[RMDB]
An RNA of 177 nucleotides, treated with DMS and read out base by base. Values cover nucleotides 27 to 126. The RNA was probed in 150 mM KOAc, 10 mM MgCl2 and 150 mM bicine (pH 8.5) at 24 C. DMS (dimethyl sulfate) methylates the pairing face of unpaired adenines and cytosines.
RNA sequence: GGGAACGACUCGAGUAGAGUCGAAAAGUGAUGGAAUCCAAACUCUUCACAUAAAAGGAAGAAGAAAACCUCGUCUCAUCGUAAAAGACUUGGUGAAGCAGUCAACAGGUGCUCAUGCUAGUGAUGGCCGUGAGAUCGUAUUCGUACGAUCUCACGGAAAAGAAACAACAACAACAAC
Reactivity to DMS in 0.01 (KOAc 150mM, MgCl2 10mM, bicine 150mM(pH8.5), 24C), signal-to-noise 1, nucleotides 027 to 126: g020u000g000a020u030g010g010a040a060u000c020c070a040a160a060c040u030c010u000u010c050a070c070a180u040a070a100a070a140g000g000a070a050g000a030a120g000a050a090a100a070c030c010u010c030g020u000c010u060c050a170u010c080g050u000a150a150a170a020g000a000c070u000u000g000g050u000g000a010a090g010c050a090g000u010c030a090a070c050a030g000g030u030g010c030u000c010a030u000g000c070u000a030g010u010g000a060u000g010g000